[RMDB]
The record gives the reactivity of an RNA of 177 nucleotides to DMS and 2A3.
For DMS the reverse transcriptase was MarathonRT.
2A3 adducts were read by reverse transcription with SuperScript II with manganese.

RNA sequence: GGGAACGACUCGAGUAGAGUCGAAAAACGAUCUAUCCCAUCCAGUCGCCCGCACUGACGGCCUAUGACGAUCAGCCGGAGCGCUGGAUCGACGUGCGCUGGGAUAUCGAUGACCAGAUGAGCGAGACUGGAUGGUACUAUUCGUAGUACCAUCCAGAAAAGAAACAACAACAACAAC
Reactivity to DMS in 0.01 (KOAc 150mM, MgCl2 10mM, bicine 150mM(pH8.5), 24C), signal-to-noise 4, nucleotides 027 to 126: a070c070g000a060u010c140u000a080u000c020c010c010a130u000c030c010a040g030u010c020g000c080c020c030g010c160a140c020u000g000a100c020g010g040c010c280u020a090u010g010a090c050g000a100u000c090a070g010c300c010g020g010a050g020c020g000c010u000g010g000a020u000c050g010a030c090g000u010g010c070g020c050u000g020g010g000a030u000a090u000c030g000a070u010g020a230c030c010a110g010a080u000g000a090g020c050g010a160g010a210
Reactivity to 2A3 in 0.01 (KOAc 150mM, MgCl2 10mM, bicine 150mM(pH8.5), 24C), signal-to-noise 3, nucleotides 027 to 126: a000c010g020a010u000c020u090a080u030c020c000c000a000u000c010c010a010g100u120c020g090c000c000c000g050c020a040c040u030g060a070c000g020g000c000c040u300a260u290g120a050c050g120a290u050c020a010g000c020c010g040g010a090g020c020g000c010u010g000g010a000u020c050g000a000c040g070u090g050c080g010c050u020g030g000g010a020u020a050u160c070g060a110u140g040a030c000c020a050g020a180u140g060a070g070c060g010a040g030a060